RNA sequence: GGGAACGACUCGAGUAGAGUCGAAAAUCAACAGGAUAUGUUAAUUAUUGGUGGUCAAAAUAUAUAUCCAGCACAUGUUGAACGCCUUUUAACGCAAUCUUCGAGCAUUGAUGAAGCAAUUAUCAUCCGAAACCCUUGUCUUCGGACAAGGGUUUCGAAAAGAAACAACAACAACAAC
Reactivity to 2A3 in 0.01 (KOAc 150mM, MgCl2 10mM, bicine 150mM(pH8.5), 24C), signal-to-noise 2, nucleotides 027 to 126: u050c000a010a090c000a090g000g120a000u000a000u000g050u100u090a070a000u010u150a180u190u210g030g030u000g040g000u260c110a040a000a300a000u040a000u020a000u000a000u100c060c000a000g120c070a040c100a130u110g000u000u000g000a080a030c000g000c010c000u070u060u080u300a040a000c000g010c040a050a070u020c040u080u030c160g000a000g020c000a020u060u010g000a000u000g020a060a010g040c080a000a000u210u110a030u220c060a060u000c000
Notes:
This 177-nucleotide RNA was probed chemically with 2A3. 2A3 adducts were read by reverse transcription with SuperScript II with manganese. It was measured as part of the RMDB library OK1LIB.